Description:
Structure probing data (2A3 and DMS) for a 177-nucleotide construct. DMS adducts were read by reverse transcription with MarathonRT. The RNA was probed in 150 mM KOAc, 10 mM MgCl2 and 150 mM bicine (pH 8.5) at 24 C. The DMS profile rests on 3,128 reads.
[RMDB]
RNA sequence: GGGAACGACUCGAGUAGAGUCGAAAAUACUAUGUAGUUGCUCACUUCCACUAUGUCUUAUCAAUAGGAGCAGUCUUCGCCAUUAUAGGAGGCUUUGUCCACUGAUUUCCACUAUUCUCAGGAUAUAUAAGUCAGGCAUAUUCGUAUGCCUGACUUAAAAAGAAACAACAACAACAAC
Reactivity to 2A3 in 0.01 (KOAc 150mM, MgCl2 10mM, bicine 150mM(pH8.5), 24C), signal-to-noise 3, nucleotides 027 to 126: u100a020c070u090a030u190g090u120a060g040u050u020g030c000u010c030a080c040u090u010c000c030a010c010u050a060u120g090u030c040u110u090a090u200c050a140a190u060a100g020g060a010g000c010a030g020u030c020u040u030c030g060c010c010a160u100u060a060u270a210g000g060a010g000g010c020u060u090u100g090u050c000c000a020c020u030g010a050u000u020u030c030c010a020c030u040a120u080u010c050u000c010a010g070g040a000u070a010u030a010
Reactivity to DMS in 0.01 (KOAc 150mM, MgCl2 10mM, bicine 150mM(pH8.5), 24C), signal-to-noise 3, nucleotides 027 to 126: u010a090c050u010a040u050g010u000a010g000u000u010g010c050u000c040a120c100u010u000c020c010a170c040u010a070u010g000u010c120u050u030a100u000c030a080a090u000a110g010g000a100g030c070a110g000u010c030u010u020c060g020c050c070a130u040u020a160u000a150g040g030a030g000g000c020u010u040u010g000u010c010c010a070c050u000g010a080u000u000u000c030c020a050c040u000a090u000u010c010u000c030a150g000g050a140u010a030u000a090